[RMDB]
RNA sequence: GGGAACGACUCGAGUAGAGUCGAAAAGGCGGCGUGCUGCUCAGCCCGUUUCUGAUCUACGUGUUGAUGGCGCUGUUGCUCACCGGCGUGCUGCGCCUGGUGGUCCAGGCCACCCCCCUGGGGCGCUAAAAUGUAACCCUUUCGAGGGUUACAUUUUAAAAGAAACAACAACAACAAC
Reactivity to DMS in 0.01 (KOAc 150mM, MgCl2 10mM, bicine 150mM(pH8.5), 24C), signal-to-noise 3, nucleotides 027 to 126: g000g010c010g010g000c020g050u020g010c050u010g020c090u010c050a090g020c030c020c030g000u000u000u010c040u030g020a090u010c100u010a060c080g010u010g020u010u020g000a070u030g010g010c020g030c030u000g040u010u030g010c070u010c040a060c020c030g000g010c020g000u000g040c140u050g000c010g000c000c010u010g010g000u010g000g000u000c050c050a070g000g010c060c040a100c010c010c030c150c020c040u010g030g010g000g000c040g010c060u000
Reactivity to 2A3 in 0.01 (KOAc 150mM, MgCl2 10mM, bicine 150mM(pH8.5), 24C), signal-to-noise 3, nucleotides 027 to 126: g120g010c040g000g010c030g020u140g060c010u030g020c000u010c030a030g020c020c040c000g020u040u080u040c070u070g140a180u020c030u080a060c060g050u060g040u100u060g030a100u060g020g000c050g010c090u060g040u120u120g020c030u030c040a020c010c030g010g010c000g030u090g080c090u130g000c000g020c010c000u010g000g020u010g000g010u030c000c030a020g020g010c000c010a030c010c000c000c000c000c000u050g010g000g000g040c010g000c000u000